RNA sequence: GGGAACGACUCGAGUAGAGUCGAAAAACACCAUGCAUGUUCUCUUACAACACAUUACAUUUUUAUUUUGAAAAUAUGAGUACUUCUUGGGAAAUGCAUUAGAUUUACAGACGGCAAGAGACGAGGAGCUCACAGCCAUGAAGCUGAGAUGUGGCUGGUGGCUCAGAAAUUUCGAUUUCUGAGCCACAAAAGAAACAACAACAACAAC
Reactivity to 2A3 in 0.01 (KOAc 150mM, MgCl2 10mM, bicine 150mM(pH8.5), 24C), signal-to-noise 1, nucleotides 027 to 156: a000c040a030c010c010a030u080g000c010a010u100g120u060u020c030u000c000u160u130a110c010a150a060c160a010c000a050u060u070a080c010a040u040u050u070u100u200a270u090u160u080u130g080a120a050a000a000u070a010u030g050a040g030u030a110c040u000u120c000u030u110g020g000g020a110a010a010u190g040c000a000u030u040a020g020a000u050u120u050a120c030a080g090a040c020g040g000c050a120a000g040a000g030a110c010g100a050g010g000a000g040c000u020c060a000c000a010g040c000c000a000u000g050a040a000g060c070u020g060a060g010a160u080g000u060g000g000c000u020g000
Chemical mapping of a 207-nucleotide RNA with 2A3. Source: RMDB library OK3TST, as collected in RNAgym. Conditions: 150 mM KOAc, 10 mM MgCl2 and 150 mM bicine (pH 8.5), 24 C. For 2A3, 428 sequencing reads were counted. For 2A3 the reverse transcriptase was SuperScript II with manganese.